RNA sequence: GGGAACGACUCGAGUAGAGUCGAAAAAAUUAGAGUCAAUUUGAAAUAAUUUAAAUUAGCUCAACCCUACUGCACUUACCGAACUAGAUAACGGUGUAGUAGGGGUAAAUUCUCCGCAUUCGGUGCGCAACCACCUGAGGUUUCGACCUCAGGUGAACACGCGAAGAUAGUUCGCUAUCUUCGCGUGAAAAGAAACAACAACAACAAC
Reactivity to 2A3 in 0.01 (KOAc 150mM, MgCl2 10mM, bicine 150mM(pH8.5), 24C), signal-to-noise 1, nucleotides 027 to 156: a010a010u070u010a020g000a000g000u040c000a000a060u000u000u120g080a090a110a090u240a160a180u130u120u100a030a020a000u080u000a000g030c000u000c010a000a010c000c000c000u000a000c000u000g000c000a000c020u090u040a030c060c060g120a110a020c000u040a170g080a180u070a300a130c220g000g020u010g000u000a000g000u000a000g010g000g000g010u000a000a000a000u040u010c010u000c000c020g000c000a030u050u080c040g060g000u020g000c000g020c020a060a060c010c010a000c000c000u010g000a010g030g130u050u130u240c270g060a100c000c000u010c000a000g010g000u000g000a010a010